[RMDB]
RNA sequence: GGGAACGACUCGAGUAGAGUCGAAAACAGCCGCCGCUAACAAUGAGGCUCUUACUCAUGAGGUAUGUAUACAAGAAUGGAAAUCUUUUGUGGGAUUCCAAUUCAAGUGUUUUAUGCCACUGACUCUUGAUGAGGAUCUGACCAUGUAUAUGAAAGAGAUUCUUUCCACGUUCGCGUGGAAAGAAUCAAAAGAAACAACAACAACAAC
Reactivity to 2A3 in 0.01 (KOAc 150mM, MgCl2 10mM, bicine 150mM(pH8.5), 24C), signal-to-noise 1, nucleotides 027 to 156: c060a040g000c020c080g010c040c040g040c110u120a060a000c010a020a230u060g010a030g040g000c000u040c010u050u110a060c010u000c040a040u090g010a030g030g060u100a020u050g010u010a130u010a060c040a090a070g030a110a030u060g050g040a060a110a120u090c010u000u140u300u240g040u160g120g000g060a030u120u270c000c010a010a070u040u010c030a050a020g000u040g070u010u020u050u060a110u110g020c000c040a010c050u030g010a010c000u000c000u040u040g010a030u010g020a040g000g000a010u000c040u060g030a060c020c010a040u060g040u090a110u020a040u140g230a080a120a070g060a010
Background: Chemical mapping of a 207-nucleotide RNA with 2A3. Source: RMDB library OK3TST, as collected in RNAgym.